[RMDB]
RNA sequence: GGGAACGACUCGAGUAGAGUCGAAAAUGAGCUCUCCCUCCUCUCACGGGAGCGCUACCUCGAGUACGUGAUGGGGGCCCUGGAGCGGAUACGGCCCGAUAUGGUGGUGAUGCGGCUCGUCACCGACAUCCCUAAAGGCUUUCGAGCCUUUAGGGAUAAAAGAAACAACAACAACAAC
Reactivity to DMS in 0.01 (KOAc 150mM, MgCl2 10mM, bicine 150mM(pH8.5), 24C), signal-to-noise 3, nucleotides 027 to 126: u000g000a040g000c010u010c030u000c010c020c020u000c140c100u000c130u010c140a090c160g000g000g000a020g010c090g000c040u000a100c120c010u010c040g000a070g010u000a050c050g030u000g010a110u010g020g000g000g000g000c060c020c070u000g010g010a070g010c060g000g010a090u000a070c130g010g010c000c010c060g010a080u020a060u010g010g030u000g000g020u000g000a030u000g000c040g020g000c020u020c000g000u000c020a030c000c000g010a070c110
Reactivity to 2A3 in 0.01 (KOAc 150mM, MgCl2 10mM, bicine 150mM(pH8.5), 24C), signal-to-noise 2, nucleotides 027 to 126: u140g000a000g000c010u010c010u050c060c010c020u060c040c050u110c000u020c050a060c060g000g010g010a020g020c020g010c000u090a090c000c030u030c020g010a030g040u050a280c010g020u060g030a180u210g060g060g040g020g000c010c010c000u030g030g030a060g060c060g040g010a070u110a080c050g080g000c010c000c000g000a060u070a070u200g090g030u080g000g000u020g000a030u030g010c020g010g000c000u010c020g000u000c020a000c010c000g010a010c000

Structure probing data (DMS and 2A3) for a 177-nucleotide construct. The RNA was probed in 150 mM KOAc, 10 mM MgCl2 and 150 mM bicine (pH 8.5) at 24 C. Values cover nucleotides 27 to 126. The 2A3 profile rests on 2,138 reads. It was measured as part of the RMDB library OK2TST.